The record gives the reactivity of an RNA of 177 nucleotides to 2A3 and DMS.
High 2A3 reactivity points to a flexible backbone, as in loops and unpaired stretches.
2A3 adducts were read by reverse transcription with SuperScript II with manganese.
RNA sequence: GGGAACGACUCGAGUAGAGUCGAAAAGGGCAAAGGUUCCUUGGCAAUGUUCGUCAGCCGAGGGUUAGCCGAUCCUAAGGUCACCCCUAACAGGAAGUGAUCGAAAGGGAAGCUGGUUAAUAUUCCAGCACCAGUAAAAUUUCGAUUUUACUGGUGCAAAAGAAACAACAACAACAAC
Reactivity to 2A3 in 0.01 (KOAc 150mM, MgCl2 10mM, bicine 150mM(pH8.5), 24C), signal-to-noise 9, nucleotides 027 to 126: g060g010g020c050a080a040a040g040g020u090u090c000c000u010u000g000g000c040a070a140u090g040u090u180c130g060u140c110a110g160c050c000g010a010g020g020g010u080u120a010g020c000c010g000a060u020c000c000u020a080a030g000g000u000c010a000c010c010c020c000u020a080a030c020a070g000g050a150a130g030u010g010a000u010c020g020a180a130a020g020g000g000a050a020g030c050u060g020g030u050u050a090a040u070a140u140u050c010c000a000
Reactivity to DMS in 0.01 (KOAc 150mM, MgCl2 10mM, bicine 150mM(pH8.5), 24C), signal-to-noise 5, nucleotides 027 to 126: g000g030g010c050a060a080a120g010g020u010u020c000c000u010u000g000g010c020a080a050u050g020u020u030c100g010u010c090a170g000c000c000g010a040g000g010g020u000u010a080g000c000c010g000a140u010c000c000u000a120a280g000g000u010c000a010c000c020c000c010u010a140a140c280a190g000g000a090a150g010u000g000a000u010c000g000a060a120a090g000g000g010a100a150g000c030u000g000g010u000u000a100a040u010a120u000u010c020c020a140